[RMDB]
RNA sequence: GGGAACGACUCGAGUAGAGUCGAAAACUUUUGGAUUUGGGAUUUGACUGCGUUGAUUAUGGACGCCGUGCUCUGGCGCGAUCCAUCCUUGGUGGUGCCGAAGUAGAAGGCCAUUACCGACUUCAGCCAGUGAAGAUCGAUUCGUCGAUCUUCACUGAAAAGAAACAACAACAACAAC
Reactivity to 2A3 in 0.01 (KOAc 150mM, MgCl2 10mM, bicine 150mM(pH8.5), 24C), signal-to-noise 3, nucleotides 027 to 126: c040u100u120u100u090g060g040a070u090u020u070g110g000g040a060u050u050u140g040a050c050u020g000c020g050u050u050g090a160u080u280a060u220g120g020a010c020g060c000c020g020u030g010c020u000c060u130g060g000c010g010c000g080a020u020c020c020a020u030c030c000u010u110g030g010u040g010g000u010g020c010c000g030a110a020g020u120a040g040a160a020g060g000c030c010a020u020u040a070c020c010g020a010c040u070u030c060a040g030c040
Reactivity to DMS in 0.01 (KOAc 150mM, MgCl2 10mM, bicine 150mM(pH8.5), 24C), signal-to-noise 3, nucleotides 027 to 126: c080u000u010u000u010g010g010a100u000u010u010g010g000g010a120u000u010u000g010a070c050u000g020c260g020u010u010g010a100u010u010a080u010g010g000a050c050g020c070c080g000u010g000c070u000c110u000g000g010c030g010c030g000a070u000c020c070a050u000c100c120u000u010g010g020u000g000g020u000g010c020c010g020a050a050g020u010a110g000a160a150g010g010c030c030a040u010u010a110c040c020g000a080c090u000u000c050a060g020c130

The data come from the RNA Mapping Database (RMDB), library OK2TRN. Chemical mapping of a 177-nucleotide RNA with 2A3 and DMS. Conditions: 150 mM KOAc, 10 mM MgCl2 and 150 mM bicine (pH 8.5), 24 C. Reactivities are rounded to 0.1 and cut off at 0 and 3. Values cover nucleotides 27 to 126. DMS adducts were read by reverse transcription with MarathonRT. For 2A3 the reverse transcriptase was SuperScript II with manganese.